[RMDB]
RNA sequence: GGGAACGACUCGAGUAGAGUCGAAAAUCCGAGGGGACCGUCCCCUCGGUAAUGGCGAAUGGGACCCAGAACUCUCUCUAGAUUCCCAGAGAGAAUCGAGAGAAAACUGGCUCUCCCUUAGCCAUCCGCAGGUAUAACUUCGGUUAUACCAAAAGAAACAACAACAACAAC
Reactivity to DMS in 0.01 (KOAc 150mM, MgCl2 10mM, bicine 150mM(pH8.5), 24C), signal-to-noise 9, nucleotides 027 to 129: u050c000c000g020a040g020g020g020g010a210c210c230g180u160c020c010c010c000u010c000g000g010u000a010a020u000g020g020c040g010a110a060u020g000g000g000a030c140c000c010a030g000a050a170c140u020c000u030c010u010c020u000a120g010a010u000u020c010c030c150a100g050a120g020a140g000a090a010u020c010g000a000g000a040g050a010a030a060a140c000u000g000g000c030u040c060u020c010c010c040u000u010a160g020c030c000a000u000c000c000g090c170a120
Reactivity to 2A3 in 0.01 (KOAc 150mM, MgCl2 10mM, bicine 150mM(pH8.5), 24C), signal-to-noise 9, nucleotides 027 to 129: u040c000c000g000a000g030g020g010g020a070c080c060g300u290c030c000c000c000u000c000g000g000u000a010a010u020g000g000c010g020a040a030u040g000g010g000a010c030c000c000a010g020a070a050c020u000c000u010c000u000c020u060a090g000a020u000u010c010c040c170a060g050a000g000a010g000a120a000u010c010g000a000g000a000g000a010a030a020a040c000u000g010g000c000u000c000u000c000c000c000u000u020a000g000c000c000a000u010c000c010g070c080a050
The record gives the reactivity of an RNA of 170 nucleotides to DMS and 2A3. DMS adducts were read by reverse transcription with MarathonRT. For DMS, 64,251 sequencing reads were counted. It was measured as part of the RMDB library 15KLIB. Values cover nucleotides 27 to 129. The reactions ran in a buffer of 150 mM KOAc, 10 mM MgCl2 and 150 mM bicine (pH 8.5), at 24 C.